An RNA of 177 nucleotides, treated with 2A3 and DMS and read out base by base. For 2A3, 2,102 sequencing reads were counted. For 2A3 the reverse transcriptase was SuperScript II with manganese. The reactions ran in a buffer of 150 mM KOAc, 10 mM MgCl2 and 150 mM bicine (pH 8.5), at 24 C. Values cover nucleotides 27 to 126.

RNA sequence: GGGAACGACUCGAGUAGAGUCGAAAAUUCCAUAGGAACACAACAUUGAUUAAUCUUAUUUUUGGUCUCCGUGGCAGGGCCCCUGUGCUUGCGCAUGCCUUGCCACACAGUGUCAUCGGGCUUACACGAUAUUCGAAAGGUUCGCCUUUCGAAUAUCAAAAGAAACAACAACAACAAC
Reactivity to 2A3 in 0.01 (KOAc 150mM, MgCl2 10mM, bicine 150mM(pH8.5), 24C), signal-to-noise 2, nucleotides 027 to 126: u030u020c030c010a000u110a060g030g040a110a000c030a010c010a110a060c030a080u020u130g050a030u180u130a130a080u100c060u150u240a180u230u190u040u080u060g080g000u050c060u030c100c110g010u010g010g000c010a000g000g030g000c000c010c010c000u040g000u030g010c030u140u090g050c000g020c010a000u130g000c000c000u000u000g000c020c000a000c000a000c000a000g040u030g020u020c010a020u070c020g000g040g000c020u090u020a010c040a020c120
Reactivity to DMS in 0.01 (KOAc 150mM, MgCl2 10mM, bicine 150mM(pH8.5), 24C), signal-to-noise 2, nucleotides 027 to 126: u000u010c010c010a090u010a090g030g000a090a020c030a060c060a090a090c080a050u010u010g010a080u000u000a080a070u000c140u000u010a120u010u000u010u000u010g010g020u000c020u000c110c130g030u000g000g000c010a010g020g000g000c000c010c060c000u000g000u000g010c020u010u000g000c070g010c010a020u020g020c010c040u000u000g020c000c010a020c030a030c130a070g020u000g010u000c050a060u000c090g040g000g020c100u000u010a080c130a100c130